[RMDB]
RNA sequence: GGGAACGACUCGAGUAGAGUCGAAAAGGCCGCCGCGGAGCUCCGAGCAGCGGUAGCGCCCCCCUGUAAAGCGGUUCGCUAUGCCGGGGCCACUGUGAACCCUGCCGCCUGCCGGAACACUCUUCGCCAAUAGCAAGUGGUUCGCCACUUGCUAUUGAAAAGAAACAACAACAACAAC
Reactivity to DMS in 0.01 (KOAc 150mM, MgCl2 10mM, bicine 150mM(pH8.5), 24C), signal-to-noise 1, nucleotides 027 to 126: g030g000c020c050g010c100c090g000c020g000g000a090g040c210u000c040c020g000a170g030c020a020g030c000g010g000u010a000g010c100g010c020c040c000c000c090c000u000g010u000a050a130a100g010c060g030g000u000u000c060g000c040u000a090u000g000c080c130g020g000g000g010c100c030a040c110u010g030u000g010a030a130c050c010c000u000g000c010c020g000c090c050u000g040c010c010g000g010a080a090c120a090c050u010c030u000u000c070g000c080
This 177-nucleotide RNA was probed chemically with DMS. In probing experiments dimethyl sulfate is read out at A N1 and C N3, which are open when not base-paired. The DMS profile rests on 970 reads.